Structure probing data (2A3) for a 177-nucleotide construct. The 2A3 profile rests on 479 reads. The RNA was probed in 150 mM KOAc, 10 mM MgCl2 and 150 mM bicine (pH 8.5) at 24 C.
[RMDB]
RNA sequence: GGGAACGACUCGAGUAGAGUCGAAAAGGUGGCUUUGUUCCCGGCGGUCGCGGGGUGCUCCGAUUCCGGCGACAACAAACCGGGAGCGACGAUCCCGUCGACACCGGCAAACGCUGAGGGCCGGCACAUCGGUGCUCGGAUUCGUCCGAGCACCGAUAAAAGAAACAACAACAACAAC
Reactivity to 2A3 in 0.01 (KOAc 150mM, MgCl2 10mM, bicine 150mM(pH8.5), 24C), signal-to-noise 1, nucleotides 027 to 126: g110g010u100g040g000c050u050u140u130g000u040u020c020c020c000g000g000c050g070g000u000c000g000c030g000g050g010g020u120g180c030u050c040c020g160a090u100u020c000c030g030g000c040g070a030c130a030a090c110a140a030a000c010c000g010g000g000a040g030c030g000a030c070g050a020u020c000c000c000g040u060c020g060a000c010a030c050c000g000g040c030a050a020a020c050g010c100u080g010a030g010g090g000c000c020g070g000c040a030c000

It was measured as part of the RMDB library OK1LIB.